[RMDB]
RNA sequence: GGGAACGACUCGAGUAGAGUCGAAAAGCGCGCGCCUGGAUCAGUACUACUCUACGAGGCGCCGUGGCCGUACGGCCAUCGUACCGUCACUCGAUCGGCCGCGAUCGAUCGAUCCAUCGCUAUGCAGCCGUGCUAGUACUUUCGAGUACUAGCACGGAAAAGAAACAACAACAACAAC
Reactivity to 2A3 in 0.01 (KOAc 150mM, MgCl2 10mM, bicine 150mM(pH8.5), 24C), signal-to-noise 2, nucleotides 027 to 126: g060c060g000c010g000c000g000c020c000u070g070g060a070u050c070a020g030u120a110c070u000a040c020u050c010u050a030c030g100a000g020g040c000g000c000c010g020u010g010g040c020c000g030u100a050c080g000g030c110c070a120u130c000g040u030a020c010c030g050u050c030a040c070u020c020g010a040u020c020g030g060c100c110g110c040g020a090u040c020g030a030u040c030g020a030u070c010c010a060u060c030g000c100u130a050u300g040c060a030g050
Reactivity to DMS in 0.01 (KOAc 150mM, MgCl2 10mM, bicine 150mM(pH8.5), 24C), signal-to-noise 3, nucleotides 027 to 126: g050c100g040c120g030c040g020c030c030u020g000g010a100u000c080a150g020u000a050c120u000a050c050u000c060u000a090c050g010a040g010g010c040g030c010c040g010u000g000g030c030c050g000u000a030c080g000g000c110c100a000u000c070g000u020a030c040c120g010u000c110a070c080u000c050g010a040u000c020g030g000c080c140g020c060g020a030u000c020g000a030u000c080g000a030u000c010c020a100u000c070g010c060u000a050u000g010c120a140g000